An RNA of 177 nucleotides, treated with DMS and read out base by base. It was measured as part of the RMDB library M2PK50.
[RMDB]
RNA sequence: GGGAACGACUCGAGUAGAGUCGAAAAGUAACAAUCUUCGGAUUGUUACAUAGCCUCCAGGUGGAAACCAAAACCUUAGAAAGAAAACAGAAAGAAAAAGAAGUGACUACCUGUUCGCAGGUAGUAAUUCCCAUAGAAGAUUCGUCUUCUAUGGGAAAAAAGAAACAACAACAACAAC
Reactivity to DMS in 0.01 (KOAc 150mM, MgCl2 10mM, bicine 150mM(pH8.5), 24C), signal-to-noise 3, nucleotides 027 to 126: g010u000a000a000c000a000a000u000c000u000u030c200g020g010a000u000u010g010u000u000a010c000a060u010a110g000c070c010u010c090c100a110g020g020u010g000g000a090a070a090c090c060a060a060a100a050c080c080u000u000a070g010a050a090a120g000a060a030a060a100c150a060g020a120a040a100g000a080a050a080a060a060g000a080a100g010u000g010a050c000u010a000c000c010u000g000u000u020c240g060c000a000g020g010u000a000g010u000a030a070
For DMS the reverse transcriptase was MarathonRT.